[RMDB]
The record gives the reactivity of an RNA of 177 nucleotides to DMS and 2A3.

RNA sequence: GGGAACGACUCGAGUAGAGUCGAAAAGAGCUGAAGUACAGCAAGAACGACGUAAUCCUUGGCACAGCGUCGAAGAUAAGCGUGCCGACUGCCAAGGAUUAACGGCACGCGAGGCGAAGACGCCAGACACGAGCAGGAUAUUCGUAUCCUGCUCGUGAAAAGAAACAACAACAACAAC
Reactivity to DMS in 0.01 (KOAc 150mM, MgCl2 10mM, bicine 150mM(pH8.5), 24C), signal-to-noise 3, nucleotides 027 to 126: g000a120g030c020u030g000a110a170g040u080a160c000a020g020c030a170a080g020a170a250c070g010a040c190g050u050a110a080u000c010c000u000u000g000g010c070a120c300a130g000c070g020u000c050g000a150a080g000a110u000a110a070g000c010g050u020g010c000c000g020a110c260u000g000c000c000a060a000g020g010a010u000u030a020a040c050g010g010c000a050c030g020c040g010a070g000g000c010g000a180a090g010a160c060g000c020c110a100g010a250
Reactivity to 2A3 in 0.01 (KOAc 150mM, MgCl2 10mM, bicine 150mM(pH8.5), 24C), signal-to-noise 3, nucleotides 027 to 126: g110a010g000c020u020g010a120a040g130u170a150c000a010g000c010a010a090g080a100a010c060g080a010c040g010u100a030a000u060c000c000u000u020g000g000c010a120c070a160g040c070g060u060c040g060a060a010g020a110u190a110a000g010c010g000u010g010c010c020g040a130c040u080g000c000c000a010a000g000g020a000u010u050a000a000c010g000g000c000a000c000g000c000g020a010g020g000c050g010a100a050g080a070c080g020c020c010a010g030a020
Overview:
For DMS, 3,649 sequencing reads were counted. For 2A3, 3,332 sequencing reads were counted.